[RMDB]
RNA sequence: GGGAACGACUCGAGUAGAGUCGAAAAGAUAUGGACAUAGAGGACUUUUGACGGCUUGUCCAUCGGAAACGAUGGAUAAGCCGAUAAGUCCCUAUGUCCUAAGUCAAACCGGACCUUCGGGUCCGGACUACGUAAACUGGUUCGCCAGUUUACGUAGAAAAGAAACAACAACAACAAC
Reactivity to 2A3 in 0.01 (KOAc 150mM, MgCl2 10mM, bicine 150mM(pH8.5), 24C), signal-to-noise 5, nucleotides 027 to 126: g000a000u030a020u070g000g000a000c010a010u050a010g210a300g110g000a020c060u110u170u280u300g260a220c300g010g000c000u000u010g000u000c000c000a000u010c000g010g010a030a040a000c000g000a000u010g000g010a000u000a000a000g010c000c000g010a000u000a000a000g000u000c010c000c000u000a000u000g000u000c000c000u000a010a000g000u000c000a000a020a100c000c000g010g000a000c010c020u090u150c300g180g000g000u010c000c000g010g000a020
Reactivity to DMS in 0.01 (KOAc 150mM, MgCl2 10mM, bicine 150mM(pH8.5), 24C), signal-to-noise 5, nucleotides 027 to 126: g000a030u000a250u020g000g000a020c010a010u000a010g000a240g030g000a010c000u000u010u010u000g010a220c140g010g020c000u000u000g010u000c010c000a010u000c000g010g000a050a060a070c000g020a020u000g000g000a000u000a000a010g020c010c000g000a000u000a010a010g020u000c000c000c000u000a000u000g000u000c000c000u000a000a040g000u000c030a100a170a230c000c000g000g020a020c000c000u000u010c240g020g010g010u000c000c000g000g000a050